The record gives the reactivity of an RNA of 177 nucleotides to DMS. Source: RMDB library M2PK90, as collected in RNAgym. Values cover nucleotides 27 to 126.
[RMDB]
RNA sequence: GGGAACGACUCGAGUAGAGUCGAAAAGAAAAAGCGGAAGUGGCGAAAUCGGUAGACGCAGUUGAUCAAAGAUCAACCGUAGAAAUACGUGCUGGUUCGAGUCCAGCCUUGCGCACCGAAAAAAAAACUAUUACUGUGCCUUCGGGCACAGUAAUAGAAAAGAAACAACAACAACAAC
Reactivity to DMS in 0.01 (KOAc 150mM, MgCl2 10mM, bicine 150mM(pH8.5), 24C), signal-to-noise 1, nucleotides 027 to 126: g000a090a070a060a120a120g000c040g010g000a060a040g020u000g030g010c000g000a020a020a030u000c210g030g020u010a060g000a230c000g020c000a050g000u000u020g000a010u000c020a250a100a120g010a000u000c000a000a010c010c040g020u000a010g000a170a110a150u000a010c020g010u010g000c000u010g010g010u010u040c110g000a300g000u010c000c020a000g020c000c080u000u000g000c000g060c010a130c020c050g010a030a000a000a030a090a000a040a060a070